The record gives the reactivity of an RNA of 207 nucleotides to 2A3. It was measured as part of the RMDB library M2RFPK.
[RMDB]
RNA sequence: GGGAACGACUCGAGUAGAGUCGAAAAGUGCCUCGUCGGCCCGGCAUGCCAACCUGAUCCGAAGUUCAAUGUGGUUUCUCUGGCCUUCCAGAGAGAUGCGCGUCGGAAGAACCGACGAACAAACCUUAAAACAAAACGACGUUCGCGUCGUUUUGAACUGAACUAUGGACUUCGGUCCAUAGUUCAGAAAAGAAACAACAACAACAAC
Reactivity to 2A3 in 0.01 (KOAc 150mM, MgCl2 10mM, bicine 150mM(pH8.5), 24C), signal-to-noise 1, nucleotides 027 to 156: g050u030g020c020c000u010c000g030u000c000g000g020c000c000c060g030g020c020a080u040g010c030c040a070a120c060c020u070g030a060u040c010c070g040a120a050g000u100u030c110a080a100u150g060u170g110g000u010u050u020c000u000c000u000g000g040c030c060u300u180c060c010a000g000a000g000a000g020a030u130g120c080g000c020g020u000c000g000g020a070a100g040a160a020c010c000g000a000c000g000a010a020c060a050a000a110c020c100u140u300a160a110a030a000c020a000a000a000a010c010g000a000c010g030u050u090c260g000c010g050u000c020g000u000u000u000u000g000a030a000